[RMDB]
RNA sequence: GGGAACGACUCGAGUAGAGUCGAAAAGCUAGUCGGAGACGACUAGCAACGAUCAGUUCGCUGAUCGGAACGUGCAUUCGAAUACGCUAGAAGCACGAAUAGGCGACGCAUAGCGACCUCCAGAGGAAGCUCAUGACAUGAGGGACAAGGCGUCGCGCACUAUUAGUGACUUCGGUCACUAAUAGUGAAAAGAAACAACAACAACAAC
Reactivity to 2A3 in 0.01 (KOAc 150mM, MgCl2 10mM, bicine 150mM(pH8.5), 24C), signal-to-noise 6, nucleotides 027 to 156: g010c000u000a000g000u000c010g020g000a040g010a090c010g000a000c000u000a000g000c010a000a010c000g000a000u000c000a010g030u080u100c170g000c080u010g000a000u000c000g010g040a080a030c010g000u010g000c090a300u000u030c020g040a120a040u160a160c090g040c110u060a050g000a040a000g000c000a000c010g030a040a100u180a090g050g000c000g000a000c000g000c010a030u090a140g070c080g070a050c000c000u020c020c030a050g000a010g090g060a080a060g100c020u010c060a190u130g060a090c050a120u160g000a000g010g040g010a030c030a080a070g080g000c010g000u020c010g000c000g010
Reactivity to DMS in 0.01 (KOAc 150mM, MgCl2 10mM, bicine 150mM(pH8.5), 24C), signal-to-noise 3, nucleotides 027 to 156: g000c010u000a010g020u010c010g000g020a300g010a300c000g020a020c010u000a040g010c010a040a020c040g010a020u000c020a030g010u000u010c300g080c020u000g000a000u000c020g000g000a020a040c010g020u000g000c020a260u010u000c020g000a090a170u000a100c140g000c050u000a130g010a100a070g010c010a050c030g020a110a120u000a070g070g010c020g020a030c000g000c040a150u000a150g010c040g000a070c020c000u010c000c060a170g010a100g030g000a140a130g000c060u000c060a110u000g040a200c150a190u000g000a020g020g010g000a130c040a190a120g040g000c030g050u010c000g050c010g010
An RNA of 207 nucleotides, treated with 2A3 and DMS and read out base by base.